[RMDB]
RNA sequence: GGGAACGACUCGAGUAGAGUCGAAAAGACAUGGGCGCAGAGGCCAGUACUCUUCGGAGUACAGGUUUCAAACGAGGCCUUGAGUGAGAUCGUGAAAGUUCGCCGUCGGGCGAAUGGAAGCGAAAAGUAGUGUGCUAGUAUUCGUACUAGCACACUAAAAAGAAACAACAACAACAAC
Reactivity to DMS in 0.01 (KOAc 150mM, MgCl2 10mM, bicine 150mM(pH8.5), 24C), signal-to-noise 8, nucleotides 027 to 126: g000a110c070a070u010g010g000g010c000g020c080a170g000a020g010g000c000c000a100g020u000a000c010u000c000u000u050c200g020g000a010g010u010a010c000a040g010g020u010u020u000c000a060a120a130c200g000a130g010g000c010c000u000u000g010a120g010u010g010a120g020a140u000c010g000u010g010a030a230a200g000u000u000c010g010c000c000g000u070c300g000g000g010c000g000a000a000u000g000g000a300a290g000c010g000a010a050a060a090g020
Reactivity to 2A3 in 0.01 (KOAc 150mM, MgCl2 10mM, bicine 150mM(pH8.5), 24C), signal-to-noise 4, nucleotides 027 to 126: g130a000c060a090u110g000g000g020c050g000c050a010g000a010g020g030c000c020a000g010u000a000c000u000c010u000u080c240g120g000a000g010u000a000c000a000g000g000u010u030u040c070a090a120a050c060g030a050g010g150c000c000u020u030g030a060g050u110g030a100g020a110u040c010g000u000g010a030a000a000g010u000u000c000g000c030c020g120u290c180g150g010g000c000g000a000a010u010g000g020a000a000g000c000g000a050a070a030a000g070

The record gives the reactivity of an RNA of 177 nucleotides to DMS and 2A3. 2A3 adducts were read by reverse transcription with SuperScript II with manganese. Values cover nucleotides 27 to 126. The RNA was probed in 150 mM KOAc, 10 mM MgCl2 and 150 mM bicine (pH 8.5) at 24 C.